Record summary
Structure probing data (DMS and 2A3) for a 207-nucleotide construct. For 2A3 the reverse transcriptase was SuperScript II with manganese. Reactivities are rounded to 0.1 and cut off at 0 and 3. It was measured as part of the RMDB library PDB130. Reactivities are given for positions 27 through 156. For DMS, 5,039 sequencing reads were counted.
[RMDB]
RNA sequence: GGGAACGACUCGAGUAGAGUCGAAAAAGCUUUUGUUCGUACAGAGCUUGCUGCUCUGCUCGCUAGUCCUCUGCUGAUCGAUGCUAUUGAUCAGCUGAACCCAGCGUAUUGAACACUGCUCAUUGCCGGUGGUGGCUCAGGGUCAAAACCCGAUCCGGAUUAUAGCCUUCUUCGGAAGGCUAUAAUCAAAAGAAACAACAACAACAAC
Reactivity to DMS in 0.01 (KOAc 150mM, MgCl2 10mM, bicine 150mM(pH8.5), 24C), signal-to-noise 2, nucleotides 027 to 156: a010g010c030u010u000u000u000g030u000u000c210g050u010a130c010a040g010a020g030c000u000u000g010c090u000g030c000u010c010u010g010c010u000c010g030c010u010a040g010u000c010c100u000c050u000g010c010u000g020a020u010c010g020a070u000g040c170u010a160u000u000g010a010u000c000a010g040c000u010g000a060a190c010c010c010a080g020c040g000u000a140u000u000g010a090a100c020a100c020u000g020c020u000c050a210u000u000g010c040c050g000g000u000g000g020u000g010g010c070u010c030a140g010g010g030u010c020a090a070a120a160c070c060c060g000a030u010c020c040g030
Reactivity to 2A3 in 0.01 (KOAc 150mM, MgCl2 10mM, bicine 150mM(pH8.5), 24C), signal-to-noise 4, nucleotides 027 to 156: a000g080c110u130u120u160u120g070u090u250c180g040u090a040c010a020g000a000g000c000u010u040g080c020u010g000c000u010c000u000g010c000u000c010g040c070u030a010g010u010c010c010u010c020u020g000c000u010g000a000u000c010g030a050u060g270c080u250a140u140u110g000a000u010c000a010g000c000u000g010a020a020c000c000c020a020g050c070g090u110a110u090u180g050a050a010c020a020c030u030g000c000u020c090a220u170u300g060c090c040g070g000u020g030g010u030g020g000c040u020c110a080g000g000g030u000c030a030a060a050a050c030c000c010g000a020u020c030c030g080